[RMDB]
RNA sequence: GGGAACGACUCGAGUAGAGUCGAAAAGAUAUGGAAUCCCGCCCGCAAGGAAAGUCGAUCGGAAACGAUCGUCUUCUGAUGACCGUAACAAGGAUUCCUAAGUCAAAGGAAUGGUUCGCCAUUCCAACCUUUAAUUCAUGUUCGCAUGAAUUAAAGGAAAAGAAACAACAACAACAAC
Reactivity to 2A3 in 0.01 (KOAc 150mM, MgCl2 10mM, bicine 150mM(pH8.5), 24C), signal-to-noise 7, nucleotides 027 to 126: g010a030u070a040u110g000g000a000a010u000c010c000c010g010c020c040c010g040c060a080a120g040g020a150a040a010g020u020c000g000a010u000c000g010g000a040a010a030c010g000a010u000c000g000u010c000u040u010c020u070g250a300u230g110a080c070c110g110u150a100a070c060a150a070g000g000a000u000u000c000c000u010a080a020g050u040c090a140a050a130g010g000a000a000u020g020g050u070u140c300g030c090c000a010u000u010c000c000a000a020
Reactivity to DMS in 0.01 (KOAc 150mM, MgCl2 10mM, bicine 150mM(pH8.5), 24C), signal-to-noise 8, nucleotides 027 to 126: g010a040u010a190u010g000g000a020a020u000c000c000c050g010c180c080c030g000c190a100a180g000g010a030a020a050g020u000c000g010a010u010c000g010g000a050a050a090c000g010a010u000c010g010u000c000u010u010c070u000g000a160u010g010a100c240c090g010u020a060a070c130a180a070g010g000a020u010u000c000c000u000a040a120g010u010c050a050a080a110g010g000a000a010u000g000g010u000u010c260g020c010c000a020u000u000c000c010a060a080